This 177-nucleotide RNA was probed chemically with DMS and 2A3. The DMS profile rests on 9,747 reads. The reactions ran in a buffer of 150 mM KOAc, 10 mM MgCl2 and 150 mM bicine (pH 8.5), at 24 C. It was measured as part of the RMDB library TTRDES.
RNA sequence: GGGAACGACUCGAGUAGAGUCGAAAAGAUAUGGAUGUACGCUCGAUAAGUCGGUGUCGGAAACGACACCCGACUUUUGACGAGCCAGUACAUCCUAAGUCAAAUCCUCAGACUUCGGUCUGAGGAACAAAAUGCCUAUGUUCGCAUAGGCAUUUUGAAAAGAAACAACAACAACAAC
Reactivity to DMS in 0.01 (KOAc 150mM, MgCl2 10mM, bicine 150mM(pH8.5), 24C), signal-to-noise 6, nucleotides 027 to 126: g000a020u010a280u010g000g000a010u000g000u000a010c010g000c000u010c000g010a180u000a020a010g020u000c010g010g020u000g020u000c000g010g000a070a040a120c010g010a020c000a010c070c080c040g020a000c000u000u000u000u000g010a220c140g000a010g020c020c150a110g050u000a010c000a000u000c000c000u000a000a070g000u010c030a120a120a190u000c000c000u000c000a020g010a010c000u000u020c280g050g000u000c000u000g000a000g010g010a010a030
Reactivity to 2A3 in 0.01 (KOAc 150mM, MgCl2 10mM, bicine 150mM(pH8.5), 24C), signal-to-noise 3, nucleotides 027 to 126: g020a010u060a010u110g000g000a010u010g000u010a010c010g010c010u010c020g140a210u040a300a000g000u010c010g000g000u010g010u000c000g000g030a050a020a010c010g000a000c000a000c010c010c030g010a000c000u000u030u000u030g150a110c010g000a000g010c010c030a010g010u000a000c000a000u000c000c000u000a080a000g030u010c030a030a000a230u000c000c000u000c010a000g000a010c000u030u210c300g110g020u000c000u000g000a000g000g000a010a000